[RMDB]
RNA sequence: GGGAACGACUCGAGUAGAGUCGAAAAGAAAAGAAAACUCUCUGCGUUUUAGAGGAAAUCGGUGUCACGAGAAUAAUAAGCGUCGGGGUGAUGCGACGCGACUCUAGUUUGCAGUGAGGAAAGAAAAGGCAUACAUUUACUUCGGUAAAUGUAUGCCAAAAGAAACAACAACAACAAC
Reactivity to 2A3 in 0.01 (KOAc 150mM, MgCl2 10mM, bicine 150mM(pH8.5), 24C), signal-to-noise 3, nucleotides 027 to 126: g010a000a030a000a000g150a000a090a000a010c000u000c000u000c000u000g010c010g030u000u060u020u030a000g000a020g070g100a000a000a120u070c030g000g010u200g210u240c090a050c200g010a010g080a120a030u140a100a010u110a060a010g000c010g000u000c000g020g090g010g110u220g140a080u200g080c000g000a000c000g000c000g000a000c000u010c000u000a040g050u000u040u050g000c000a000g010u030g040a000g070g030a040a080a000g100a030a110a000a010
Reactivity to DMS in 0.01 (KOAc 150mM, MgCl2 10mM, bicine 150mM(pH8.5), 24C), signal-to-noise 2, nucleotides 027 to 126: g020a060a090a020a130g000a110a040a150a180c020u000c000u000c010u000g000c000g020u000u000u030u000a050g000a040g000g000a050a060a090u000c010g030g000u000g000u070c140a150c040g010a040g000a060a090u010a030a070u010a090a090g020c030g020u010c000g010g000g000g030u030g060a060u000g000c000g060a030c020g000c080g050a060c010u000c010u000a030g000u010u030u030g000c020a000g000u010g020a000g000g000a030a030a160g010a040a070a080a080
Structure probing data (2A3 and DMS) for a 177-nucleotide construct.
Conditions: 150 mM KOAc, 10 mM MgCl2 and 150 mM bicine (pH 8.5), 24 C.
For 2A3, 1,886 sequencing reads were counted.
For DMS the reverse transcriptase was MarathonRT.
It was measured as part of the RMDB library OK1LIB.
For DMS, 2,593 sequencing reads were counted.